[RMDB]
Background: An RNA of 177 nucleotides, treated with 2A3 and DMS and read out base by base. Source: RMDB library RFMREP, as collected in RNAgym. The reactions ran in a buffer of 150 mM KOAc, 10 mM MgCl2 and 150 mM bicine (pH 8.5), at 24 C. The DMS profile rests on 2,270 reads.
RNA sequence: GGGAACGACUCGAGUAGAGUCGAAAAUAUUUUCUGUGUCUAAGCACUGGUGAUUCUGUUCACUAGUGCAUACAUUGAUAUUUAAGUGGUGUUCCGUCACUGCUUAUUGUGGAAGCAACGUUCUGUCCUAGCUUAAUCUCUUCGGAGAUUAAGCUAGAAAAGAAACAACAACAACAAC
Reactivity to 2A3 in 0.01 (KOAc 150mM, MgCl2 10mM, bicine 150mM(pH8.5), 24C), signal-to-noise 2, nucleotides 027 to 126: u050a050u050u160u050u030c020u050g020u010g080u010c080u110a150a030g000c000a010c000u000g020g000u030g040a020u300u210c080u280g260u190u020c010a000c000u000a000g000u000g000c000a000u000a010c000a020u010u060g070a010u030a030u170u130u060a010a000g020u020g010g000u030g030u050u170c050c040g180u240c020a000c010u020g060c020u100u020a040u080u200g090u080g050g110a070a080g000c090a090a050c090g040u010u000c000u000g020u000c010
Reactivity to DMS in 0.01 (KOAc 150mM, MgCl2 10mM, bicine 150mM(pH8.5), 24C), signal-to-noise 2, nucleotides 027 to 126: u010a030u010u010u010u000c020u000g000u000g010u000c240u000a120a110g010c000a010c000u010g030g000u000g000a030u000u030c280u020g010u000u000c000a010c000u010a010g020u000g020c010a010u000a020c030a020u010u000g010a030u000a040u000u000u000a030a020g010u010g010g020u000g010u000u000c100c080g000u010c000a020c000u000g010c000u000u000a010u000u000g010u000g020g030a050a090g010c060a040a070c220g000u000u000c020u000g000u000c060